[RMDB]
RNA sequence: GGGAACGACUCGAGUAGAGUCGAAAAAGGAGGUGUUCGCACCUCCUAAAAAGCGUACUACCAGAGGAAACAAUUCGCGAAACGACCUCCCAAAUAGGAGGUCGGAGAAUGUUUCUACCCACCUGGUAUCGCAAAAAACACAGCUUCGGCUGUGUAAGACGAACCUAAUGUUCGCAUUAGGUUCGUCAAAAGAAACAACAACAACAAC
Reactivity to 2A3 in 0.01 (KOAc 150mM, MgCl2 10mM, bicine 150mM(pH8.5), 24C), signal-to-noise 1, nucleotides 027 to 156: a000g000g010a000g000g020u020g010u020u100c120g000c040a000c000c000u000c000c010u010a050a020a000a000a000g010c020g010u070a040c030u000a000c000c010a000g030a010g060g000a000a010a000c030a180a300u040u040c030g000c040g080a100a030a020c000g000a000c000c000u060c020c010c020a260a300a140u300a070g000g000a010g000g000u010c030g030g000a130g000a000a000u000g000u000u010u070c040u050a040c000c020c080a070c010c000u000g010g050u010a060u060c040g000c000a020a020a020a020a020a020c000a000c010a000g010c000u040u180c250g140g020c000u000g000u000g000u020a060a010

Chemical mapping of a 207-nucleotide RNA with 2A3.
It was measured as part of the RMDB library RNAMAK.
The RNA was probed in 150 mM KOAc, 10 mM MgCl2 and 150 mM bicine (pH 8.5) at 24 C.
The 2A3 profile rests on 1,000 reads.